[RMDB]
RNA sequence: GGGAACGACUCGAGUAGAGUCGAAAAGACCUUGGGUACGGUAAAAUCAGCAAAGAUGCAACAAUGGGCAAUCCGCAGCCAAGCUCCUACGGGCUGUCAAAGCCUAUGGAGAAGGUUCAGAGACUAAAUGGCAGUGGGCAAGCAUGGCAAUGCUUGCGAUGAAGACGUACUUCGGUACGUCUUCAUCAAAAGAAACAACAACAACAAC
Reactivity to 2A3 in 0.01 (KOAc 150mM, MgCl2 10mM, bicine 150mM(pH8.5), 24C), signal-to-noise 4, nucleotides 027 to 156: g080a030c010c000u030u040g030g000g030u040a030c040g000g030u020a040a020a020a190u110c030a010g050c030a050a120a050g080a050u110g030c030a070a040c010a080a120u090g020g020g000c030a030a070u030c020c040g000c040a010g000c010c010a030a070g030c000u020c000c000u020a040c100g000g010g000c010u070g100u250c120a030a160a000g010c000c000u030a060u140g010g000a020g000a020a010g000g010u040u060c040a010g040a000g010a090c020u080a070a070a070u070g020g000c020a020g030u070g010g050g000c010a010a000g000c010a030u050g050g000c060a080a040u040g010c000u010u010g010c010
Reactivity to DMS in 0.01 (KOAc 150mM, MgCl2 10mM, bicine 150mM(pH8.5), 24C), signal-to-noise 2, nucleotides 027 to 156: g030a070c020c020u010u000g040g030g000u000a020c060g020g000u000a060a060a100a120u010c040a090g040c020a100a100a140g000a120u010g000c030a080a090c050a040a100u000g020g020g040c030a090a150u010c000c040g020c080a090g000c010c020a070a120g030c000u000c010c000u010a050c090g030g000g030c000u000g020u010c190a030a160a070g030c000c010u000a060u000g000g000a070g000a080a080g020g040u000u000c040a080g010a170g020a090c020u010a050a060a100u000g000g050c020a080g000u000g010g000g020c010a040a020g020c010a030u000g000g030c120a070a170u000g010c000u010u000g010c190
Record summary
The record gives the reactivity of an RNA of 207 nucleotides to 2A3 and DMS. For DMS, 4,958 sequencing reads were counted.